[RMDB]
RNA sequence: GGGAACGACUCGAGUAGAGUCGAAAAGGCUGAUGCCGGAGCCGAUACCGGAAUACGAGACCUCAUGUGCGGUCGAAUGCACUGAAGUACGAAAGUACGAAGAGGUCAUACCGAGGACCGAGACUCGAUAUGCUCGAUAGAUGGAGCUUUACAUCAACACGAUAUUAAUCUUCGGAUUAAUAUCGUGAAAAGAAACAACAACAACAAC
Reactivity to 2A3 in 0.01 (KOAc 150mM, MgCl2 10mM, bicine 150mM(pH8.5), 24C), signal-to-noise 5, nucleotides 027 to 156: g020g020c020u030g050a070u130g080c010c010g010g010a020g020c010c120g080a030u110a120c020c020g010g040a060a020u120a090c060g040a040g010a130c000c010u020c000a040u040g010u010g010c010g000g020u100c110g020a080a060u130g000c000a000c010u050g050a080a010g000u010a000c010g030a120a030a020g010u010a000c010g020a050a020g010a000g000g010u000c000a000u050a020c010c000g000a030g030g040a020c040c060g020a040g040a100c010u010c030g030a050u030a030u160g020c010u000c030g070a080u050a090g050a050u070g040g000a020g010c000u070u110u060a080c060a060u060c040a050a030
Reactivity to DMS in 0.01 (KOAc 150mM, MgCl2 10mM, bicine 150mM(pH8.5), 24C), signal-to-noise 3, nucleotides 027 to 156: g030g040c020u010g030a100u010g030c000c030g040g010a100g030c030c060g000a160u000a030c020c010g020g000a120a160u000a120c080g020a190g000a070c020c000u010c020a230u010g050u010g020c050g020g000u000c170g000a120a210u000g000c000a020c010u000g020a080a180g000u010a050c000g050a260a110a220g030u000a030c000g010a080a170g010a080g020g030u010c000a020u010a020c040c020g030a060g000g010a200c030c070g000a200g010a140c030u000c000g020a040u000a020u020g000c020u030c000g000a120u000a090g010a100u000g000g000a060g020c030u000u000u000a110c040a030u000c010a020a250
Source information:
Structure probing data (2A3 and DMS) for a 207-nucleotide construct. It was measured as part of the RMDB library OK3TST. The reactions ran in a buffer of 150 mM KOAc, 10 mM MgCl2 and 150 mM bicine (pH 8.5), at 24 C.